[RMDB]
RNA sequence: GGGAACGACUCGAGUAGAGUCGAAAAGGGUGUGAGAGUAUCUCUCUCCCAGCCGGUUCGCGCAGCCAUCUUUUUCGACUUUACUUGGGUUAGCUGCGCGAACUGGCUGGCGUUCCCGGCUGCUUUCGAGCAGCCAAAAGAAACAACAACAACAAC
Reactivity to DMS in 0.01 (KOAc 150mM, MgCl2 10mM, bicine 150mM(pH8.5), 24C), signal-to-noise 3, nucleotides 027 to 135: g000g000g000u010g000u000g000a030g010a050g010u030a110u030c080u010c000u010c020u000c030c000c000a000g000c000c000g000g000u000u000c010g000c010g010c010a010g010c000c110a050u010c010u010u010u000u020u010c060g000a060c070u010u020u020a070c110u010u010g010g000g010u010u010a040g010c000u000g000c000g010c010g000a020a000c010u000g000g010c000u000g000g000c000g000u000u000c000c010c010g010g010c000u000g010c000u000u000u030c140g010a010g010c000a010g020c010c020a020
Reactivity to 2A3 in 0.01 (KOAc 150mM, MgCl2 10mM, bicine 150mM(pH8.5), 24C), signal-to-noise 7, nucleotides 027 to 135: g030g010g000u060g010u040g020a030g010a020g040u190a300u070c060u000c000u000c010u020c040c000c010a000g000c000c000g010g000u000u000c000g000c000g000c000a000g000c010c020a070u040c080u040u120u030u040u080c050g050a050c040u070u110u160a050c030u060u080g030g000g000u020u030a010g000c000u000g000c000g000c000g000a000a000c000u000g000g000c000u000g000g000c000g000u000u000c000c000c000g010g000c000u000g000c000u030u050u100c170g100a010g000c000a000g010c000c000a090

An RNA of 155 nucleotides, treated with DMS and 2A3 and read out base by base. The RNA was probed in 150 mM KOAc, 10 mM MgCl2 and 150 mM bicine (pH 8.5) at 24 C. Reactivities are given for positions 27 through 135.